About this RNA: Structure probing data (2A3 and DMS) for a 170-nucleotide construct. Conditions: 150 mM KOAc, 10 mM MgCl2 and 150 mM bicine (pH 8.5), 24 C. For DMS the reverse transcriptase was MarathonRT.

RNA sequence: GGGAACGACUCGAGUAGAGUCGAAAAGGGCCGGCUACUCUUCUUUUCCUUUCCUCGUCAUCCUGGGUCAACCUCUUAAGUUCCUCUUCCUCCUCCUUGCUGAGGUUCUUCCCUCCCGCGCUGAGUUCACGCGAUUACUUCGGUAAUCGCAAAAGAAACAACAACAACAAC
Reactivity to 2A3 in 0.01 (KOAc 150mM, MgCl2 10mM, bicine 150mM(pH8.5), 24C), signal-to-noise 7, nucleotides 027 to 129: g010g010g000c010c000g020g010c030u060a060c020u030c010u090u050c010u040u050u040u060c010c000u040u040u030c010c020u030c010g080u020c040a070u040c010c030u040g020g010g020u050c020a060a110c030c010u090c010u060u090a110a020g010u040u010c000c000u020c030u040u020c010c000u030c000c000u020c000c010u020u040g010c020u020g030a030g030g000u030u020c000u010u020c000c000c000u020c000c000c000g020c000g000c020u040g050a040g090u070u070c060a040c080
Reactivity to DMS in 0.01 (KOAc 150mM, MgCl2 10mM, bicine 150mM(pH8.5), 24C), signal-to-noise 5, nucleotides 027 to 129: g000g020g030c000c000g000g000c030u030a020c000u030c040u030u030c040u010u000u010u000c000c050u000u010u010c010c000u020c000g020u030c090a090u010c010c060u000g030g000g000u000c060a100a140c020c060u000c070u000u070a090a090g030u000u020c050c020u000c000u030u020c000c040u020c000c000u020c030c030u040u010g030c080u000g020a170g020g050u010u000c080u020u040c030c000c020u020c030c030c020g030c120g000c100u070g040a120g000u000u040c060a040c160